The record gives the reactivity of an RNA of 207 nucleotides to 2A3 and DMS.
2A3 is a SHAPE reagent: it acylates the 2'-hydroxyl of flexible nucleotides of all four kinds.
It was measured as part of the RMDB library OK3TST.
2A3 adducts were read by reverse transcription with SuperScript II with manganese.
The RNA was probed in 150 mM KOAc, 10 mM MgCl2 and 150 mM bicine (pH 8.5) at 24 C.
[RMDB]
RNA sequence: GGGAACGACUCGAGUAGAGUCGAAAAAAUAUCACAUACCUUUCGGUAAGUACUCUGGCCAACAUCUCGAGUGCCAACUUGGUGACUGCGAACAUCCAAUCUGCAAAUGUUCAGACUGGAAAUCUGGUGUCACUCAACGUGAGUACCGGAGCUAACGCUAUACGGCCCUUUUCGAAGGGCCGUAUAGAAAAGAAACAACAACAACAAC
Reactivity to 2A3 in 0.01 (KOAc 150mM, MgCl2 10mM, bicine 150mM(pH8.5), 24C), signal-to-noise 2, nucleotides 027 to 156: a000a000u300a000u090c080a060c060a120u110a080c030c010u100u100u110c040g020g040u040a060a020g010u030a030c040u080c040u040g030g000c010c030a070a040c000a270u050c030u050c180g120a020g020u090g030c030c040a040a090c030u020u020g000g000u000g010a010c010u070g080c010g000a000a000c000a070u000c010c000a000a020u000c040u020g050c020a080a250a090u090g010u200u180c000a020g020a020c010u050g010g010a100a070a030u060c050u050g070g000u020g040u040c010a020c030u110c020a070a060c080g020u030g030a010g080u000a040c000c000g000g030a000g050c070u020a080a000c010g040
Reactivity to DMS in 0.01 (KOAc 150mM, MgCl2 10mM, bicine 150mM(pH8.5), 24C), signal-to-noise 1, nucleotides 027 to 156: a040a130u020a040u000c000a060c050a200u020a220c010c090u000u000u000c070g030g050u000a070a020g090u000a040c000u000c030u000g020g010c080c080a100a080c100a090u000c020u000c130g000a100g020u000g090c000c000a030a140c100u030u000g040g040u000g030a080c100u040g020c010g030a070a070c040a300u000c050c010a000a030u030c000u000g000c100a110a080a150u000g000u000u000c030a030g040a040c000u010g000g000a010a060a040u010c040u000g000g030u020g000u010c000a000c000u000c040a110a000c200g010u000g010a050g040u000a040c000c040g000g010a060g010c020u020a150a090c170g020